[RMDB]
Conditions: 150 mM KOAc, 10 mM MgCl2 and 150 mM bicine (pH 8.5), 24 C. An RNA of 177 nucleotides, treated with DMS and 2A3 and read out base by base.
RNA sequence: GGGAACGACUCGAGUAGAGUCGAAAAGGUGACAUUUUGUGCAACUAGAAGAGUUGCGGAAAAACGAGGAUUUUUCCAUUGCUGAAUAAUCUCAUCAUGAUUUCAGCUAACAAGUCCGGAACGUGCAAUGGUAAUGGACUUUCGAGUCCAUUACCAUAAAAGAAACAACAACAACAAC
Reactivity to DMS in 0.01 (KOAc 150mM, MgCl2 10mM, bicine 150mM(pH8.5), 24C), signal-to-noise 4, nucleotides 027 to 126: g060g000u010g000a060c110a100u020u010u000u010g000u000g030c010a020a000c000u010a230g050a180a090g000a070g000u000u000g000c020g010g000a010a000a000a020a040c040g000a210g020g000a090u010u030u000u000u010c020c010a160u020u020g000c020u000g020a030a020u020a030a010u000c020u000c260a060u040c300a050u020g000a120u010u000u000c030a000g020c030u000a160a050c200a060a050g010u030c010c020g000g000a100a090c080g000u010g000c160a130
Reactivity to 2A3 in 0.01 (KOAc 150mM, MgCl2 10mM, bicine 150mM(pH8.5), 24C), signal-to-noise 4, nucleotides 027 to 126: g050g050u100g000a020c050a080u040u040u000u090g300u020g080c000a020a000c020u030a080g140a280a040g140a200g050u010u000g000c000g000g020a030a030a000a010a000c140g040a170g090g010a050u020u000u010u030u130c020c040a060u020u120g000c000u000g020a060a060u170a100a080u060c030u020c090a300u020c040a060u250g000a000u000u000u020c000a000g000c000u010a050a000c040a120a000g010u030c030c020g080g030a060a050c020g070u090g110c100a080